[RMDB]
RNA sequence: GGGAACGACUCGAGUAGAGUCGAAAAGAAGCACAAAUGUGUUAAGAAUCACUAAGGUUUAGGGAAAUGAAGAUGGGUGACUCAAUUCUUAGAAUAUCGUAACGAUGAAGGAGUAUAAUGUGAGGAUUUUCAUGUAAGAUGUCACUAGCUUCCUUCUUACAUGCAAAGUUCUCACAUGUUCCUUCAAGGAAGCUAGUGACAUAAGAAUUGAGUCAAUUCCAUCAACUAUCGUUACGAUAUUCAAGUGAUGUUUAUCCCUAUUGUGCAGAGGAGUGUUCGCACUCUUCAAAAGAAACAACAACAACAAC
Reactivity to DMS in 0.01 (KOAc 150mM, MgCl2 10mM, bicine 150mM(pH8.5), 24C), signal-to-noise 9, nucleotides 027 to 266: g010a140a130g000c010a020c020a050a070a150u010g010u000g000u000u010a030a040g000a280a080u000c010a020c020u010a120a110g010g010u010u010u000a050g010g010g010a040a090a070u010g010a070a090g000a030u000g000g000g040u000g010a050c010u000c010a020a030u000u000c000u000u000a090g000a030a020u000a010u000c020g000u000a020a010c030g000a020u000g010a100a080g010g010a110g010u010a070u010a080a050u000g010u010g010a060g010g000a140u010u000u010u000c010a020u010g000u010a060a070g010a050u000g000u000c010a010c010u000a010g000c010u000u000c000c000u000u000c190u010u010a010c010a010u000g000c140a060a070a110g010u000u010c060u010c060a150c010a010u000g000u000u000c150c110u010u010c220a020a010g000g000a020a010g010c010u000a010g010u000g000a010c010a010u000a010a010g010a030a020u000u010g010a030g010u000c020a030a050u010u010c000c010a030u000c020a030a070c100u010a040u000c010g000u000u000a010c010g000a020u000a010u010u000c020a050a050g010u000g010a030u000g000u010u010u000a040u000c010c010c010u000a140u000u000g010u000g010c020a170
Reactivity to 2A3 in 0.01 (KOAc 150mM, MgCl2 10mM, bicine 150mM(pH8.5), 24C), signal-to-noise 9, nucleotides 027 to 266: g050a030a010g010c040a000c010a040a150a080u170g030u000g020u040u070a090a030g060a060a050u050c010a010c060u080a100a120g140g040u090u090u220a070g050g020g050a070a140a130u190g070a090a100g040a040u070g040g060g090u080g020a000c000u000c010a010a030u080u000c010u030u090a040g010a030a010u020a010u020c010g010u000a010a000c020g010a010u060g090a080a060g110g110a050g050u140a090u090a200a120u170g090u060g120a110g060g020a020u050u050u040u040c020a010u070g040u080a050a060g020a120u050g000u000c000a000c000u000a000g000c000u000u010c000c000u030u070c010u030u060a020c000a000u020g040c060a120a110a100g080u200u070c070u020c070a020c000a000u000g000u010u040c020c020u100u100c020a000a000g000g000a000a000g000c000u000a000g000u000g000a000c000a000u000a000a000g010a010a020u010u000g000a000g010u000c000a000a010u040u000c000c000a010u010c000a000a010c000u030a010u020c000g010u010u010a010c000g000a010u010a020u060u030c020a020a010g020u020g030a030u050g040u040u080u050a070u060c020c000c010u040a080u040u040g020u020g010c050a020
Notes: This 307-nucleotide RNA was probed chemically with DMS and 2A3. Source: RMDB library POS240, as collected in RNAgym.